Chemical mapping of a 207-nucleotide RNA with DMS and 2A3. It was measured as part of the RMDB library M2RFPK. Values cover nucleotides 27 to 156. The reactions ran in a buffer of 150 mM KOAc, 10 mM MgCl2 and 150 mM bicine (pH 8.5), at 24 C.
[RMDB]
RNA sequence: GGGAACGACUCGAGUAGAGUCGAAAAAUUGAGGGAUAAUACAGGCUCUCCCAUCCAACUCCUAUUCCAACACGUCCUCGUCGUACAGAGUGGUAACAUGUGUCACCACAUAUCCAAGCUUGGGUGCAAAAGCCAACUACGUUCGCGUAGUUGGCAACAUCCUUAAUUAGUUCGCUAAUUAAGGAUGAAAAGAAACAACAACAACAAC
Reactivity to DMS in 0.01 (KOAc 150mM, MgCl2 10mM, bicine 150mM(pH8.5), 24C), signal-to-noise 4, nucleotides 027 to 156: a110u000u000g010a070g010g010g000a110u010a050a120u000a140c110a100g020g000c050u010c030u000c010c000c010a160u000c000c020a090a090c030u000c020c010u010a100u000u010c020c040a080a050c070a070c070g000u000c020c010u010c030g030u000c040g030u000a100c080a130g000a150g040u010g000g030u010a020a020c030a160u010g030u000g030u000c040a030c010c010a030c020a100u010a070u010c040c020a040a090g010c060u000u000g010g000g020u000g000c030a060a070a090a140g010c000c000a000a010c000u000a000c000g040u000u000c300g000c020g080u000a010g010u000u000g010g010c000a000a030
Reactivity to 2A3 in 0.01 (KOAc 150mM, MgCl2 10mM, bicine 150mM(pH8.5), 24C), signal-to-noise 7, nucleotides 027 to 156: a000u120u100g010a050g010g020g020a030u060a180a050u140a200c080a060g090g000c010u010c010u020c030c000c000a040u050c030c010a040a040c030u020c020c010u040a090u060u050c040c030a040a030c040a030c090g040u030c010c010u060c040g070u020c010g000u050a050c030a070g090a030g090u030g010g010u060a080a010c050a110u150g090u070g040u120c030a020c050c000a020c020a030u110a020u030c040c010a030a020g010c050u070u060g030g000g010u050g020c030a020a040a060a020g000c000c000a000a000c000u000a000c000g020u020u040c100g010c000g140u000a000g000u000u000g000g000c000a000a000
As a SHAPE reagent, 2A3 marks flexible, mostly unpaired nucleotides at the ribose 2'-OH. In probing experiments dimethyl sulfate is read out at A N1 and C N3, which are open when not base-paired. For DMS, 9,749 sequencing reads were counted.